RNA sequence: GGGAACGACUCGAGUAGAGUCGAAAAGUUAAAUAAACAUUCAAAACUGAAUACAAUAUGUCACGUUAUUCCGCAUCUUCUGAAGAAGAUGUUCCGAAUAUAUCCUUAGAAAGGAGGUGAUCCAGCCGAGUACCUUCCAAUUCGUUGGAAGGUACUCAAAAGAAACAACAACAACAAC
Reactivity to 2A3 in 0.01 (KOAc 150mM, MgCl2 10mM, bicine 150mM(pH8.5), 24C), signal-to-noise 2, nucleotides 027 to 126: g010u030u030a100a040a030u180a030a130a040c050a070u050u070c070a090a060a240a220c140u080g030a020a060u190a050c080a090a090u070a070u300g020u020c020a000c040g020u000u030a020u070u000c020c020g030c010a020u030c000u060u020c030u180g300a300a300g000a000a000g000a120u000g010u070u000c010c000g000a000a000u000a000u000a020u020c000c010u030u000a060g120a050a060a010g010g000a030g000g050u010g000a000u060c060c000a010g080c000c050
Reactivity to DMS in 0.01 (KOAc 150mM, MgCl2 10mM, bicine 150mM(pH8.5), 24C), signal-to-noise 2, nucleotides 027 to 126: g010u010u010a040a080a100u010a060a140a210c070a100u010u010c050a020a100a050a150c190u000g010a070a010u000a170c130a100a080u020a100u000g000u010c020a010c010g040u000u000a020u010u020c000c180g030c000a000u010c000u010u010c000u010g000a070a220g010a010a010g020a000u000g000u000u020c160c190g000a000a020u000a050u000a080u000c000c010u000u000a090g010a100a270a050g000g000a040g000g010u000g000a050u000c070c060a170g030c270c140